[RMDB]
RNA sequence: GGGAACGACUCGAGUAGAGUCGAAAAGAUAUGGAUGUCAGUAGGGAGCUCGUAUCGGAAACGAUACAAGAGCGACGAUCUACGACAUCCUAAGUCAAACUGAAGGCGAGUUCGCUCGCCUUCAGAACUCCAUUAUAUCGUUCGCGAUAUAAUGGAGAAAAGAAACAACAACAACAAC
Reactivity to DMS in 0.01 (KOAc 150mM, MgCl2 10mM, bicine 150mM(pH8.5), 24C), signal-to-noise 5, nucleotides 027 to 126: g010a040u000a290u010g000g000a010u010g010u010c000a160g040u000a020g020g000g000a130g010c000u000c000g010u000a010u000c000g020g000a070a050a120c000g000a010u000a010c010a080a170g010a020g020c000g000a110c300g020a070u010c000u000a010c010g000a010c010a000u000c000c000u000a000a060g010u000c020a150a120a260c010u000g000a010a010g000g010c000g020a030g040u000u020c300g020c010u000c000g000c000c010u000u000c000a000g000a060a120
Reactivity to 2A3 in 0.01 (KOAc 150mM, MgCl2 10mM, bicine 150mM(pH8.5), 24C), signal-to-noise 2, nucleotides 027 to 126: g010a010u060a030u140g000g010a010u010g010u080c120a130g010u100a020g030g030g080a040g010c010u000c010g000u000a000u010c010g000g010a060a060a010c010g000a010u000a010c070a110a160g000a000g020c010g010a130c040g020a050u000c000u000a010c000g000a000c000a010u020c000c000u000a030a000g000u000c040a090a090a170c000u000g000a000a000g010g000c000g000a010g020u060u150c260g120c100u000c000g000c000c000u000u000c010a000g000a000a010